[RMDB]
RNA sequence: GGGAACGACUCGAGUAGAGUCGAAAAAAAGCUAGGUGCAUUUCUCUGGGGACACAGGGAACAGAGAGAAGAGGGGCGAGAGGGAUCAAUAGAUGGGAGAUAAUAAAGUUUAUGAGAGGUAUGGGGCUCAAGACUACGGAUUCGUCCGUAGUCUUGAAAAAGAAACAACAACAACAAC
Reactivity to 2A3 in 0.01 (KOAc 150mM, MgCl2 10mM, bicine 150mM(pH8.5), 24C), signal-to-noise 3, nucleotides 027 to 126: a000a000a000g090c020u070a050g030g020u070g040c010a040u050u010u000c030u000c000u010g020g010g120g040a030c090a030c070a160g060g040g020a030a050c020a030g030a010g010a000g010a100a000g010a040g000g000g070g000c070g000a020g000a010g010g000g040a030u050c030a040a090u050a060g090a040u060g000g080g020a060g020a040u090a110a000u140a060a170a020g020u090u060u070a130u130g060a070g000a010g060g000u060a010u130g000g020g000g000c020
Reactivity to DMS in 0.01 (KOAc 150mM, MgCl2 10mM, bicine 150mM(pH8.5), 24C), signal-to-noise 3, nucleotides 027 to 126: a030a040a020g010c090u030a030g020g000u000g010c030a100u000u040u020c030u000c020u000g050g000g010g020a090c080a060c110a090g010g000g000a120a070c140a060g020a090g010a090g010a050a080g010a140g060g000g010g000c060g000a070g020a100g010g000g000a140u020c100a050a130u040a140g000a130u000g000g010g010a070g030a050u030a080a070u040a070a050a110g010u000u000u020a040u010g010a090g010a020g010g000u020a030u010g000g010g000g000c140
An RNA of 177 nucleotides, treated with 2A3 and DMS and read out base by base. As a SHAPE reagent, 2A3 marks flexible, mostly unpaired nucleotides at the ribose 2'-OH. For 2A3, 1,591 sequencing reads were counted. Conditions: 150 mM KOAc, 10 mM MgCl2 and 150 mM bicine (pH 8.5), 24 C. For DMS the reverse transcriptase was MarathonRT.